An RNA of 177 nucleotides, treated with 2A3 and read out base by base.
RNA sequence: GGGAACGACUCGAGUAGAGUCGAAAAAAUGUAUAUGUGUAACCUUUAUUGCCAUAAGUAUCUAUCCAGUGUCCUAUUAAUGCAAAUUGGAAUACAUCUGGUGAAAAUCCUAAAGCUGCAGCUAUACGCCGCAGGAUCAGUUCGCUGAUCCUGCGGCAAAAGAAACAACAACAACAAC
Reactivity to 2A3 in 0.01 (KOAc 150mM, MgCl2 10mM, bicine 150mM(pH8.5), 24C), signal-to-noise 1, nucleotides 027 to 126: a000a010u250g030u070a060u040a110u090g050u000g070u120a070a080c000c000u000u090u090a210u300u230g130c080c000a130u150a070a030g000u000a080u070c000u030a030u040c060c000a000g030u000g030u000c000c000u150a260u010u100a080a260u130g040c170a130a000a000u000u000g000g080a000a050u210a010c110a210u130c000u000g000g000u000g000a000a210a090a000u010c030c030u000a020a020a020g000c000u030g000c000a000g000c000u000a000u000a000c010

For 2A3 the reverse transcriptase was SuperScript II with manganese. It was measured as part of the RMDB library OK1LIB. For 2A3, 365 sequencing reads were counted. The RNA was probed in 150 mM KOAc, 10 mM MgCl2 and 150 mM bicine (pH 8.5) at 24 C.